[RMDB]
RNA sequence: GGGAACGACUCGAGUAGAGUCGAAAACAAUGUAGUAGGUUUGGAUCUUAGAUGUAAUGGAACUAAACUUGAUUGGAUACAAAGGUCUGAUUUUGUUCGACCAACAUAGGAUUAAUUAACCUCAUAACACCUCUCACUAAUUCGUUAGUGAGAGGUGAAAAGAAACAACAACAACAAC
Reactivity to DMS in 0.01 (KOAc 150mM, MgCl2 10mM, bicine 150mM(pH8.5), 24C), signal-to-noise 4, nucleotides 027 to 126: c050a110a090u020g010u010a080g010u020a020g010g010u000u000u000g020g000a030u000c010u000u010a070g000a120u000g010u000a080a080u010g000g010a100a140c140u010a060a040a030c030u010u000g000a030u000u000g010g000a040u010a140c220a060a130a160g020g000u000c010u010g010a010u000u000u000u000g000u000u000c130g000a200c020c010a020a060c040a070u000a030g010g000a020u000u000a030a160u010u000a020a020c020c000u000c060a120u020a110a170
Reactivity to 2A3 in 0.01 (KOAc 150mM, MgCl2 10mM, bicine 150mM(pH8.5), 24C), signal-to-noise 5, nucleotides 027 to 126: c030a050a060u210g050u190a100g010u040a000g040g010u010u020u070g060g020a020u010c010u040u060a140g020a260u070g030u050a190a090u070g020g000a040a060c040u090a120a050a010c000u020u010g020a010u010u020g020g020a020u070a210c120a130a250a050g160g020u000c010u000g070a060u010u040u030u020g010u030u030c050g040a040c050c000a010a010c010a010u040a020g000g010a000u000u030a030a100u080u050a060a060c000c000u020c000a050u090a180a020
The data come from the RNA Mapping Database (RMDB), library OK2TST. The record gives the reactivity of an RNA of 177 nucleotides to DMS and 2A3. 2A3 adducts were read by reverse transcription with SuperScript II with manganese. For DMS, 3,763 sequencing reads were counted. Conditions: 150 mM KOAc, 10 mM MgCl2 and 150 mM bicine (pH 8.5), 24 C. For 2A3, 4,364 sequencing reads were counted. High 2A3 reactivity points to a flexible backbone, as in loops and unpaired stretches. Values are in units of 0.01, from 0 to 300, in steps of 10. DMS adducts were read by reverse transcription with MarathonRT.